[RMDB]
RNA sequence: GGGAACGACUCGAGUAGAGUCGAAAAGAUAUGGAUUGUGGGAGCGUAUCCUUCGGAAACGAAGGUAAGCGCUUUGAUCACACAUCCUAAGUCAAAACUUGAGACCUCCUUCGGGAGGUCUCAAGAACAACGUAAGAUUGUUCGCAAUCUUACGUUGAAAAGAAACAACAACAACAAC
Reactivity to 2A3 in 0.01 (KOAc 150mM, MgCl2 10mM, bicine 150mM(pH8.5), 24C), signal-to-noise 3, nucleotides 027 to 126: g020a010u050a010u140g000g000a020u030u090g000u010g000g020g010a060g000c000g010u030a070u190c010c020u000u000c000g000g020a060a050a030c020g010a010a010g010g050u040a300a080g020c010g000c000u120u050u040g040a040u080c000a000c000a000c030a040u000c010c010u020a170a000g040u020c040a050a040a100a200c010u010u010g000a000g010a000c000c020u020c010c030u090u170c300g020g000g000a000g000g000u010c010u010c000a010a010g000a000a000
Reactivity to DMS in 0.01 (KOAc 150mM, MgCl2 10mM, bicine 150mM(pH8.5), 24C), signal-to-noise 5, nucleotides 027 to 126: g010a030u000a300u010g000g000a020u000u000g000u000g000g000g000a000g020c000g020u000a230u010c000c000u000u010c000g010g010a080a070a160c000g010a020a010g000g010u010a040a190g010c000g010c010u000u000u000g010a100u000c040a050c000a020c160a020u000c000c010u010a060a140g000u010c020a080a060a080a180c010u010u010g000a010g000a020c000c000u000c000c000u000u010c210g030g010g010a020g000g010u000c010u000c000a000a000g000a110a170